RNA sequence: GGGAACGACUCGAGUAGAGUCGAAAAGGUGCGCAGCGAGCGCAUGUUGAUGGAACAGAUGCGCUACAACCUGCUGUUCCGUUGGUUCGUCGGACUGGCGAUCGAAGACGCCGUCUGGGACCACUCACUCCCAAAAUCACUUCGGUGAUUUUGGGAGAAAAGAAACAACAACAACAAC
Reactivity to 2A3 in 0.01 (KOAc 150mM, MgCl2 10mM, bicine 150mM(pH8.5), 24C), signal-to-noise 2, nucleotides 027 to 126: g050g010u050g000c090g000c000a040g090c050g100a010g000c040g010c020a020u050g100u130u090g140a190u140g030g070a050a030c010a010g050a100u040g060c000g010c030u130a110c030a050a070c000c030u040g000c030u050g030u000u040c000c020g000u030u060g040g020u040u010c070g120u060c010g080g000a010c060u150g020g000c040g050a160u050c070g080a160a030g110a050c030g000c000c000g000u020c010u000g000g000g000a000c000c000a010c030u020c000a030
Reactivity to DMS in 0.01 (KOAc 150mM, MgCl2 10mM, bicine 150mM(pH8.5), 24C), signal-to-noise 2, nucleotides 027 to 126: g010g020u000g020c020g030c040a070g000c120g030a040g000c010g040c010a010u010g010u030u000g000a100u000g010g010a150a080c040a030g010a070u000g010c050g030c020u000a130c140a070a160c300c060u000g000c000u020g020u000u010c000c000g030u000u000g020g020u000u000c000g000u010c020g000g000a010c000u070g050g000c010g010a170u010c090g000a160a160g010a120c010g020c000c010g000u010c000u000g010g000g000a010c000c010a100c110u000c120a140